[RMDB]
The record gives the reactivity of an RNA of 177 nucleotides to 2A3 and DMS.
For DMS the reverse transcriptase was MarathonRT.
Reactivities are rounded to 0.1 and cut off at 0 and 3.

RNA sequence: GGGAACGACUCGAGUAGAGUCGAAAAGAUAUGGACCCUACAGACAUGCAAUGUCGGAAACGACAUGCAACAGCUGUCAGGGUCCUAAGUCAAAACUAGUAAUGGGACUUCGGUCCCAUUACUAGAAUCUAUAGGCGAAGUUCGCUUCGCCUAUAGAAAAAGAAACAACAACAACAAC
Reactivity to 2A3 in 0.01 (KOAc 150mM, MgCl2 10mM, bicine 150mM(pH8.5), 24C), signal-to-noise 2, nucleotides 027 to 126: g010a000u030a020u060g000g000a000c000c000c000u010a010c010a030g170a100c030a030u040g000c030a020a300u010g010u000c020g000g010a020a060a030c010g010a000c000a010u000g000c010a100a080c020a180g050c000u020g010u080c220a000g010g010g000u000c000c000u000a000a020g000u000c020a000a000a080a150c010u000a000g000u010a010a000u000g020g000g020a010c000u100u040c300g080g000u000c020c000c000a000u010u000a000c000u000a010g000a010a000
Reactivity to DMS in 0.01 (KOAc 150mM, MgCl2 10mM, bicine 150mM(pH8.5), 24C), signal-to-noise 4, nucleotides 027 to 126: g010a050u000a290u010g000g010a010c000c010c000u010a040c000a010g000a080c100a230u000g010c010a040a050u000g030u000c000g020g000a090a040a180c010g010a010c000a020u000g000c000a020a070c270a140g000c000u000g000u000c230a020g000g010g010u000c000c000u000a010a040g000u000c020a110a060a090a160c010u000a000g000u010a000a010u000g000g010g000a030c000u000u000c200g030g010u000c010c000c000a000u000u000a000c000u000a000g000a080a070